[RMDB]
RNA sequence: GGGAACGACUCGAGUAGAGUCGAAAACCUGUUAUCUGACCAAUAACAGAAUGCACCACAGCGUAAAAUCAUCUGAUUGGGUGAGUUGGCCGCACCGCCAUUUGACGAACGAACGCCAAGCCUAAGCACUACGAGUAUGUGUUCGCACAUACUCGAAACUUUGCAAGUAGUUCGCUACUUGCAAAGUAAAAGAAACAACAACAACAAC
Reactivity to 2A3 in 0.01 (KOAc 150mM, MgCl2 10mM, bicine 150mM(pH8.5), 24C), signal-to-noise 6, nucleotides 027 to 156: c010c000u010g010u010u020a040u020c030u020g020a040c020c010a030a030u020a030a010c000a000g060a080a090u140g010c050a030c020c040a040c060a040g030c020g060u090a030a090a050a120u070c040a020u000c030u090g080a170u080u140g060g000g000u050g030a090g050u040u080g030g000c000c020g040c040a040c040c020g040c030c020a050u050u060u120g050a040c030g010a120a020c040g000a060a010c030g030c030c010a030a010g000c010c000u080a100a020g050c050a050c120u160a050c060g000a000g010u000a000u000g020u000g010u040u060c090g030c040a000c000a000u000a000c000u000c000g000a000a000
Reactivity to DMS in 0.01 (KOAc 150mM, MgCl2 10mM, bicine 150mM(pH8.5), 24C), signal-to-noise 2, nucleotides 027 to 156: c080c010u010g020u000u000a020u030c020u020g040a110c060c110a200a050u000a030a050c020a060g000a130a140u010g000c040a120c010c050a050c050a060g000c070g020u000a030a090a070a110u000c050a060u000c020u030g000a090u000u010g040g040g040u000g020a110g030u000u000g010g000c020c020g000c030a110c040c020g050c030c000a180u000u000u000g030a070c050g010a060a140c070g030a050a080c040g010c000c000a060a150g040c000c000u000a080a130g000c030a140c030u000a150c000g020a040g040u000a000u000g040u000g010u000u000c300g060c010a020c010a020u000a000c010u010c010g000a010a040